[RMDB]
RNA sequence: GGGAACGACUCGAGUAGAGUCGAAAAUCUUCUCUUCCAUCGCGCUUCUUCUUCGACUCGGAACGGCUCAUCUCGACAAGAGGCGGCGGUCCUCAGUGCUCUUACUCUUUUCUGUAAAGAGGAGACUGCUGGACUCGCCGCCCAAGUUCGAGCAUGGUCCUACCUAGAACUUCGGUUCUAGGUAGGAAAAAGAAACAACAACAACAAC
Reactivity to 2A3 in 0.01 (KOAc 150mM, MgCl2 10mM, bicine 150mM(pH8.5), 24C), signal-to-noise 2, nucleotides 027 to 156: u040c010u030u060c030u020c000u060u020c010c010a090u030c040g000c020g010c090u050u020c020u060u000c010u030u020c030g060a060c050u040c070g090g040a110a030c060g050g000c020u010c040a050u030c000u000c000g020a000c010a060a060g130a140g070g000c000g000g020c000g000g000u000c000c000u010c030a040g010u150g240c020u010c010u100u210a300c000u010c000u030u030u150u240c140u300g300u300a030a000a000g030a000g010g000a010g000a000c000u000g080c100u010g000g010a030c060u020c090g000c000c000g000c000c000c000a010a000g010u030u000c000g000a000g000c050a020u040g010g000

Description:
The data come from the RNA Mapping Database (RMDB), library VIROID. An RNA of 207 nucleotides, treated with 2A3 and read out base by base. The reactions ran in a buffer of 150 mM KOAc, 10 mM MgCl2 and 150 mM bicine (pH 8.5), at 24 C.